An RNA of 177 nucleotides, treated with 2A3 and DMS and read out base by base. The 2A3 profile rests on 2,938 reads. The reactions ran in a buffer of 150 mM KOAc, 10 mM MgCl2 and 150 mM bicine (pH 8.5), at 24 C. Source: RMDB library OK2TST, as collected in RNAgym. For DMS the reverse transcriptase was MarathonRT.

RNA sequence: GGGAACGACUCGAGUAGAGUCGAAAAGAGAAGUCACCCGUUAUAUCAUGGGCUCUAGACAACCACAGGGUGCUACAUUACAUGAUAUGCAUGUGCUACAUGUAAUUUUUAUAGGUGGAAUAGGGUACAAUUUGUUGACUUUCGAGUCAACAAAUUGAAAAGAAACAACAACAACAAC
Reactivity to 2A3 in 0.01 (KOAc 150mM, MgCl2 10mM, bicine 150mM(pH8.5), 24C), signal-to-noise 3, nucleotides 027 to 126: g070a000g000a040a060g100u080c020a020c010c010c000g030u080u070a250u050a060u240c100a110u140g070g070g010c000u000c010u010a060g020a130c070a080a060c040c010a010c020a040g030g030g000u010g000c000u020a020c010a030u000u020a000c010a010u030g110a240u070a060u250g020c040a060u260g160u300g200c000u000a010c000a010u000g000u010a010a010u000u050u000u040u060a300u100a080g070g080u020g020g080a090a100u050a040g020g000g010u070a050
Reactivity to DMS in 0.01 (KOAc 150mM, MgCl2 10mM, bicine 150mM(pH8.5), 24C), signal-to-noise 5, nucleotides 027 to 126: g000a110g010a090a070g000u010c020a050c010c010c010g020u010u000a110u010a090u010c150a130u000g000g020g010c030u000c020u000a070g020a110c210a110a110c030c000a060c040a110g010g000g030u010g020c090u010a040c230a020u000u000a010c000a000u000g000a120u010a010u010g040c010a220u000g010u010g010c020u000a030c000a010u000g000u000a000a000u000u000u000u010u020a090u010a110g020g000u000g000g010a090a140u000a030g000g010g000u000a180